[RMDB]
RNA sequence: GGGAACGACUCGAGUAGAGUCGAAAAGGAACGGCUCAUCUCGGCUAGAGGCGGCAGUCCUCAGUACUCUUACUCUUUUCUGUAAAGAGGAGACUGCUGGACUCGCCGCCCGAGUCCGAGCUGGGCCAAGUCCGAGCGAAGGGACGCGGUGGGAGGAGAUUCGGUUAGGGUUCGCCCUAACCGAAUCAAAAGAAACAACAACAACAAC
Reactivity to 2A3 in 0.01 (KOAc 150mM, MgCl2 10mM, bicine 150mM(pH8.5), 24C), signal-to-noise 1, nucleotides 027 to 156: g030g000a080a040c110g000g000c010u000c010a010u020c000u000c000g020g010c020u060a040g030a200g110g000c000g000g000c050a010g000u000c000c000u020c020a010g000u190a300c050u000c060u160u190a150c010u000c000u040u150u110u130c150u200g120u220a000a050a000g010a010g000g020a000g000a000c010u010g050c100u000g010g000a000c000u020c060g040c010c000g020c000c000c000g000a000g050u000c000c030g020a030g010c010u020g000g020g000c020c000a000a000g000u020c000c010g000a000g060c090g030a090a070g000g060g030a100c150g040c050g000g170u290g100g000g010a020g050g050a110
An RNA of 207 nucleotides, treated with 2A3 and read out base by base. The 2A3 profile rests on 644 reads. The reactions ran in a buffer of 150 mM KOAc, 10 mM MgCl2 and 150 mM bicine (pH 8.5), at 24 C. Values are in units of 0.01, from 0 to 300, in steps of 10.